[RMDB]
RNA sequence: GGGAACGACUCGAGUAGAGUCGAAAAAGGGGCUACAUCCUGGACUUCGCAGCCAUGCACCUGUGGAGGGCCUGGAUCAGGCAGCGGGGACAGAGAAUCUUGAAUUACUGGCUUCUACAGCCAGCAGACACCUGAUCCUCUUCGGAGGAUCAGGUGUAAAAGAAACAACAACAACAAC
Reactivity to DMS in 0.01 (KOAc 150mM, MgCl2 10mM, bicine 150mM(pH8.5), 24C), signal-to-noise 1, nucleotides 027 to 126: a120g010g000g030g000c050u000a080c170a080u000c030c050u010g010g020a300c050u020u000c110g010c030a060g000c060c070a110u000g010c170a110c130c050u000g010u010g000g020a050g030g010g000c030c000u000g000g000a040u000c120a050g020g040c060a090g020c090g000g010g020g020a090c080a040g010a040g000a060a090u010c050u020u020g000a120a110u010u010a110c010u000g000g000c000u000u000c180u040a080c210a040g000c010c000a020g060c090a030g010